[RMDB]
RNA sequence: GGGAACGACUCGAGUAGAGUCGAAAAAUGACCUCCACUGUCAACCUUGGAUCAAGCACAUCCUCAAGAUGGACUAUAGCAAAGUCGCAGUGCAUGCUGUGUCUUCGGACUAUGAUGAAUUGUGCUGAGUUACGGAAUUCUUCGGAAUUCCGUAACUAAAAGAAACAACAACAACAAC
Reactivity to DMS in 0.01 (KOAc 150mM, MgCl2 10mM, bicine 150mM(pH8.5), 24C), signal-to-noise 3, nucleotides 027 to 126: a100u000g000a080c010c030u020c040c040a020c050u000g000u010c020a070a130c050c030u010u010g010g030a050u020c100a140a030g010c020a040c020a100u000c060c040u010c120a040a070g000a100u000g000g000a070c110u000a060u000a030g000c050a070a010a030g010u000c020g050c030a010g010u000g000c300a100u020g000c000u000g010u000g000u000c000u000u010c120g020g010a160c010u000a010u000g040a100u000g000a060a040u010u000g010u000g000c000u000g010
Reactivity to 2A3 in 0.01 (KOAc 150mM, MgCl2 10mM, bicine 150mM(pH8.5), 24C), signal-to-noise 2, nucleotides 027 to 126: a020u060g020a020c000c000u000c040c000a040c030u060g000u050c010a080a100c030c020u070u090g040g010a040u050c040a040a020g000c000a000c020a020u010c010c020u050c030a040a000g040a040u070g030g030a030c050u060a030u060a100g020c000a110a000a000g030u010c010g020c040a010g030u060g110c060a050u300g000c000u010g010u010g000u050c000u010u020c040g180g020a090c020u020a050u070g110a070u060g040a050a160u070u080g000u010g000c000u040g010

This 177-nucleotide RNA was probed chemically with DMS and 2A3. It was measured as part of the RMDB library OK2TRN. The RNA was probed in 150 mM KOAc, 10 mM MgCl2 and 150 mM bicine (pH 8.5) at 24 C.